[RMDB]
RNA sequence: GGGAACGACUCGAGUAGAGUCGAAAAGGGGUCGCUUCCAAUGAUGAUGGUGUUACAGCCCGUGAUGAUGGGUGGAGGCUACUGAAGCCUCCACGGUAGCCGUUGAAACCCAUCAUCACGGGAAGGUGGCCAUUUGAGGAAGCGACGGAGGCACCCACGACCUAUUGAUGUUCGCAUCAAUAGGUCGAAAAGAAACAACAACAACAAC
Reactivity to 2A3 in 0.01 (KOAc 150mM, MgCl2 10mM, bicine 150mM(pH8.5), 24C), signal-to-noise 1, nucleotides 027 to 156: g080g000g030g010u000c050g010c020u000u000c040c010a110a260u230g050a030u070g000a010u020g000g030u110g080u300u230a040c070a040g130c020c000c000g030u000g000a000u000g000a000u000g010g000g000u030g080g010a040g000g030c000u000a000c010u010g050a150a020g050c000c010u000c000c030a000c000g000g000u030a000g000c000c010g030u120u040g000a100a140a020c000c000c020a000u000c000a000u000c010a000c000g040g000g000a000a000g010g000u010g110g020c020c010a020u020u000u030g040a040g000g000a000a000g020c000g000a000c000g000g010a000g000g000c050a090c050c000c010a020